[RMDB]
RNA sequence: GGGAACGACUCGAGUAGAGUCGAAAAUGAAAUAAAGCGUAGGAAGAUGGACGUACGCAACCAGUGCGUACAGGAAUCGCACAUCCAGCGCUCUAAGGUGAGCGCAAAACCUAAUAAUAGAAAAAAACGAUUCUAGUAUGUUCGCAUACUAGAAUCGAAAAGAAACAACAACAACAAC
Reactivity to DMS in 0.01 (KOAc 150mM, MgCl2 10mM, bicine 150mM(pH8.5), 24C), signal-to-noise 2, nucleotides 027 to 126: u020g000a070a050a110u000a060a060a180g020c090g000u010a040g010g000a100a080g000a110u000g030g010a220c170g000u000a020c000g000c010a090a170c150c110a150g000u000g000c020g010u000a020c030a110g000g010a080a030u000c060g000c100a060c140a140u000c080c080a150g050c000g020c000u000c010u000a040a080g010g000u010g000a010g000c020g000c000a010a010a080a060c040c030u000a050a080u000a060a100u020a200g010a050a000a040a050a120a000a150
Reactivity to 2A3 in 0.01 (KOAc 150mM, MgCl2 10mM, bicine 150mM(pH8.5), 24C), signal-to-noise 2, nucleotides 027 to 126: u060g010a050a020a050u110a030a070a050g020c040g010u080a080g040g100a070a040g060a100u110g010g030a050c060g010u010a000c010g030c000a050a060c100c060a070g210u000g050c000g000u000a000c040a010g050g000a040a040u020c010g000c050a010c010a090u000c020c020a030g000c000g000c000u000c010u030a170a080g290g020u110g030a030g000c000g040c050a000a020a000a060c030c000u090a120a100u240a150a070u110a160g130a090a050a040a010a000a000a030

An RNA of 177 nucleotides, treated with DMS and 2A3 and read out base by base.
For DMS, 1,321 sequencing reads were counted.
The 2A3 profile rests on 1,444 reads.
The RNA was probed in 150 mM KOAc, 10 mM MgCl2 and 150 mM bicine (pH 8.5) at 24 C.